Conditions: 150 mM KOAc, 10 mM MgCl2 and 150 mM bicine (pH 8.5), 24 C. An RNA of 207 nucleotides, treated with 2A3 and DMS and read out base by base. For 2A3 the reverse transcriptase was SuperScript II with manganese.
[RMDB]
RNA sequence: GGGAACGACUCGAGUAGAGUCGAAAAUGAGCGGUCCAUGGGGAAACCUCCCUUCGUCCUUCGGCAUUGUGGUGCGUCGUGGGAAAGCGUGCCGCAUGGGGAAGCCGUGUACGAGGACGUACACCUUGUUUUGGUGGGGGAGAGUGUCACGUUCCGCCGAAUAUUGACACUUCGGUGUCAAUAUUCGAAAAGAAACAACAACAACAAC
Reactivity to 2A3 in 0.01 (KOAc 150mM, MgCl2 10mM, bicine 150mM(pH8.5), 24C), signal-to-noise 9, nucleotides 027 to 156: u180g010a020g010c010g010g010u020c050c050a160u150g030g000g000g110a040a080a050c000c000u010c000c000c000u040u060c020g000u010c010c000u100u120c010g010g000c040a100u030u040g010u010g010g000u010g010c010g000u030c020g010u060g010g070g000a010a020a010g010c000g000u010g000c000c010g010c010a030u050g000g000g030g080a100a060g010c010c030g030u050g040u070a110c160g030a020g000g010a000c000g090u150a010c000a010c000c010u140u150g160u280u300u230u170g020g000u000g000g000g000g020g010a000g010a060g010u050g060u050c030a030c060g020u050u020c000c010g000c010
Reactivity to DMS in 0.01 (KOAc 150mM, MgCl2 10mM, bicine 150mM(pH8.5), 24C), signal-to-noise 1, nucleotides 027 to 156: u000g010a160g030c030g000g000u000c080c100a170u030g000g020g000g010a090a100a060c010c050u000c000c000c000u010u000c010g000u010c000c000u000u000c050g010g040c040a150u030u010g040u000g030g050u010g010c000g020u000c000g030u000g020g000g000a300a100a060g020c030g030u000g030c020c000g080c000a030u000g000g000g000g000a200a160g000c040c020g050u000g010u000a070c160g000a050g030g020a120c010g020u020a080c020a000c020c030u000u030g000u000u020u010u000g040g000u010g010g010g040g010g000a070g020a080g000u010g000u010c020a050c000g030u000u020c000c010g060c190
For DMS the reverse transcriptase was MarathonRT.